Notes: This 177-nucleotide RNA was probed chemically with DMS and 2A3. The RNA was probed in 150 mM KOAc, 10 mM MgCl2 and 150 mM bicine (pH 8.5) at 24 C.

[RMDB]
RNA sequence: GGGAACGACUCGAGUAGAGUCGAAAAGAAGUGGCAGGGACAUGCCCCAAAAGCUCGUUCUAGCAACAUAUGUUUGGCUAGUUCGAGCGAUUAGUCUAGAGGAGCGUCCUCUCGCCUUUUUACGAGAACGGAUUAUGAGUUUCGACUCAUAAUCCGUAAAAGAAACAACAACAACAAC
Reactivity to DMS in 0.01 (KOAc 150mM, MgCl2 10mM, bicine 150mM(pH8.5), 24C), signal-to-noise 2, nucleotides 027 to 126: g000a070a060g000u020g000g040c000a070g000g000g020a020c040a100u020g000c010c010c010c030a070a100a070a210g010c000u010c010g050u000u000c000u000a000g010c000a020a020c030a210u040a090u070g000u000u020u030g020g000c010u000a000g000u000u030c000g000a010g020c000g030a010u020u020a060g000u030c140u040a050g000a250g000g020a140g000c040g010u010c010c010u000c020u020c140g030c020c000u000u000u000u010u020a100c090g000a120g020a120
Reactivity to 2A3 in 0.01 (KOAc 150mM, MgCl2 10mM, bicine 150mM(pH8.5), 24C), signal-to-noise 4, nucleotides 027 to 126: g110a050a020g080u070g030g010c000a020g020g000g010a020c030a060u280g020c010c000c000c000a040a070a000a000g000c000u000c000g000u000u010c000u000a000g000c030a000a080c030a060u300a040u300g140u130u040u070g170g000c000u000a000g030u000u000c000g000a000g000c010g000a000u010u050a000g030u030c050u080a030g010a110g010g050a110g040c010g020u000c020c000u020c000u000c020g010c000c000u020u030u000u010u080a070c070g010a020g010a080